[RMDB]
RNA sequence: GGGAACGACUCGAGUAGAGUCGAAAAGGUUUCGACAGCGGAUGUCGAGGCAGGGGAAGCGUGUCGAGGAAGCGGCCACGAUCUCGUUAACCACAGGCCGAAAAAAAUAAUCGCCAAUUCCAAGAGCGAUUCUCCGCAGCAGCAGUUCUCCCUCGCCCAGUAGCUAUUACUUCGGUAAUAGCUACUGAAAAGAAACAACAACAACAAC
Reactivity to 2A3 in 0.01 (KOAc 150mM, MgCl2 10mM, bicine 150mM(pH8.5), 24C), signal-to-noise 3, nucleotides 027 to 156: g050g000u010u040u080c010g010a020c030a070g030c110g210g200a080u040g010u020c000g010a010g010g010c030a040g000g000g020g000a010a010g030c040g030u070g090u080c040g010a040g040g000a030a030g040c010g000g000c000c000a060c030g110a170u110c100u060c090g070u090u160a060a070c020c000a020c090a100g010g000c000c000g010a080a020a010a000a000a000a010u210a010a030u040c020g000c010c020a020a090u150u040c040c040a070a020g020a030g010c000g010a010u010u010c010u000c020c020g000c030a040g000c000a000g020c000a020g020u080u020c070u070c020c020c000u010c040g020c010c010
Reactivity to DMS in 0.01 (KOAc 150mM, MgCl2 10mM, bicine 150mM(pH8.5), 24C), signal-to-noise 1, nucleotides 027 to 156: g000g000u010u000u000c050g000a060c030a110g000c090g050g020a180u000g020u010c080g020a080g020g010c040a160g020g020g100g000a110a050g000c060g000u000g000u010c040g040a300g000g000a090a140g020c210g010g010c010c050a150c080g000a130u000c080u000c150g000u000u000a040a120c070c050a080c050a140g000g000c000c020g050a010a000a000a120a080a080a080u010a040a010u000c040g000c010c010a020a270u010u000c130c050a050a300g000a150g000c000g010a030u000u000c010u000c000c030g000c050a070g000c040a060g010c040a070g010u010u010c020u000c010c010c020u000c050g040c190c040

Source: RMDB library RSTRND, as collected in RNAgym.
Chemical mapping of a 207-nucleotide RNA with 2A3 and DMS.
DMS adducts were read by reverse transcription with MarathonRT.
Conditions: 150 mM KOAc, 10 mM MgCl2 and 150 mM bicine (pH 8.5), 24 C.